Annotation:
The record gives the reactivity of an RNA of 177 nucleotides to DMS and 2A3. DMS (dimethyl sulfate) methylates the pairing face of unpaired adenines and cytosines. As a SHAPE reagent, 2A3 marks flexible, mostly unpaired nucleotides at the ribose 2'-OH. Source: RMDB library TTRDEL, as collected in RNAgym. The RNA was probed in 150 mM KOAc, 10 mM MgCl2 and 150 mM bicine (pH 8.5) at 24 C. For DMS, 3,357 sequencing reads were counted. Values cover nucleotides 27 to 126.

[RMDB]
RNA sequence: GGGAACGACUCGAGUAGAGUCGAAAAGAUAUGGAUAGAACUAUAAUCUACUCAUCUUCGGAAACGAAGAUGAGGUAGGUAGUUCGUCCUAAGUCAAAACCAGAACUAGCUUCGGCUAGUUCUGGAAGAGAAGGUACAAGUUCGCUUGUACCUUCUCAAAAGAAACAACAACAACAAC
Reactivity to DMS in 0.01 (KOAc 150mM, MgCl2 10mM, bicine 150mM(pH8.5), 24C), signal-to-noise 3, nucleotides 027 to 126: g010a020u010a150u020g010g010a020u000a090g010a010a000c000u010a020u010a270a130u020c140u000a120c000u000c000a000u000c000u010u010c000g000g000a050a030a080c000g020a010a000g010a000u000g000a000g010g020u000a010g020g020u000a000g010u010u000c000g000u000c000c000u010a020a100g000u010c020a150a060a080a180c010c000a000g000a010a000c000u000a010g000c000u000u010c250g030g010c000u000a000g000u000u000c000u000g000g010a020a070
Reactivity to 2A3 in 0.01 (KOAc 150mM, MgCl2 10mM, bicine 150mM(pH8.5), 24C), signal-to-noise 3, nucleotides 027 to 126: g020a010u030a010u080g010g000a020u050a300g010a120a000c010u020a020u070a250a300u180c160u220a060c000u010c000a010u000c000u000u000c000g000g020a040a030a010c010g010a000a000g010a010u010g000a010g020g000u010a040g110g010u000a000g000u000u000c000g010u000c010c000u000a060a010g000u010c030a000a040a060a140c000c000a000g000a000a000c010u000a010g010c010u060u070c300g090g000c000u000a000g000u000u020c000u000g000g000a020a000